[RMDB]
Chemical mapping of a 177-nucleotide RNA with DMS and 2A3.
The RNA was probed in 150 mM KOAc, 10 mM MgCl2 and 150 mM bicine (pH 8.5) at 24 C.
It was measured as part of the RMDB library TTRDES.
RNA sequence: GGGAACGACUCGAGUAGAGUCGAAAAGAUAUGGAUGUGAUUUGGACAUGCCAUCCAUCGGAAACGAUGGGUUGGCAACAGCCAACUGUCACAUCCUAAGUCAAAGAAUCCCCUUCGGGGGAUUCAAGAAGUAACAUCACUUCGGUGAUGUUACUUCAAAAGAAACAACAACAACAAC
Reactivity to DMS in 0.01 (KOAc 150mM, MgCl2 10mM, bicine 150mM(pH8.5), 24C), signal-to-noise 2, nucleotides 027 to 126: g000a040u000a300u020g000g020a020u000g030u030g010a000u000u020u000g000g010a020c170a290u020g000c000c000a000u000c000c000a050u000c010g000g010a200a050a220c000g000a010u000g000g000g020u000u000g020g030c000a040a050c300a150g010c000c000a020a050c300u010g000u000c000a010c010a020u000c010c020u000a010a030g010u000c040a040a110a220g000a060a030u000c000c000c000c010u000u000c230g080g000g000g010g010a000u000u000c010a050a100
Reactivity to 2A3 in 0.01 (KOAc 150mM, MgCl2 10mM, bicine 150mM(pH8.5), 24C), signal-to-noise 1, nucleotides 027 to 126: g000a000u070a010u140g000g000a000u010g030u010g050a020u130u150u130g020g020a080c160a270u200g000c000c000a000u010c010c000a000u000c010g000g000a020a010a020c020g000a000u000g010g030g080u130u300g050g000c030a030a040c010a020g050c030c000a030a030c120u090g020u010c000a010c000a010u030c000c000u010a030a020g030u000c050a020a050a300g000a030a030u000c080c010c000c000u020u130c300g030g000g000g000g010a020u000u010c000a000a010